[RMDB]
Record summary: An RNA of 207 nucleotides, treated with 2A3 and DMS and read out base by base. The 2A3 profile rests on 509 reads. The data come from the RNA Mapping Database (RMDB), library OK3TST. For 2A3 the reverse transcriptase was SuperScript II with manganese. Reactivities are given for positions 27 through 156.
RNA sequence: GGGAACGACUCGAGUAGAGUCGAAAAUUUCAAGGUUGUCAGAUAUCAUUAUCCCCAAGUAUUAAAAAUUUCAAAGAAAGGAGGCAGUGUGUUUGAUUUAUAGAAUAGUUAUCUAGCUUUAGCUCUGACUUGGCUUUGGAAAUGGUUUUGCAAGCACACUGAUUCUAGGAUUCGUCCUAGAAUCAGUAAAAGAAACAACAACAACAAC
Reactivity to 2A3 in 0.01 (KOAc 150mM, MgCl2 10mM, bicine 150mM(pH8.5), 24C), signal-to-noise 1, nucleotides 027 to 156: u050u060u010c040a110a040g040g000u070u000g060u040c030a020g010a100u060a080u100c060a020u050u230a100u210c060c000c030c000a040a000g050u080a090u190u210a070a070a020a020a040u060u210u030c100a150a060a040g030a110a070a030g000g010a020g000g000c000a010g020u010g000u000g040u010u000u080g020a070u060u070u100a090u070a070g030a080a030u030a120g000u090u060a110u110c000u080a010g000c030u010u140u060a040g020c000u010c000u050g000a040c000u030u060g040g040c000u010u080u080g020g010a030a090a110u070g010g000u040u010u020u060g060c060a000a080g030c090a020c000
Reactivity to DMS in 0.01 (KOAc 150mM, MgCl2 10mM, bicine 150mM(pH8.5), 24C), signal-to-noise 2, nucleotides 027 to 156: u000u010u000c040a110a090g050g030u000u000g030u000c010a100g010a100u000a030u020c030a080u000u000a090u010c010c010c000c030a060a140g010u000a080u010u010a010a050a070a090a140u000u010u010c070a100a050a160g020a080a130a130g000g020a070g030g030c040a030g040u010g050u000g020u010u000u000g000a130u010u010u000a110u000a160g000a070a090u000a090g010u000u000a030u010c020u000a050g030c070u000u000u000a100g020c010u010c020u000g000a080c040u000u000g030g000c040u010u010u000g020g010a090a130a100u000g000g020u000u000u000u000g010c070a050a090g020c040a100c120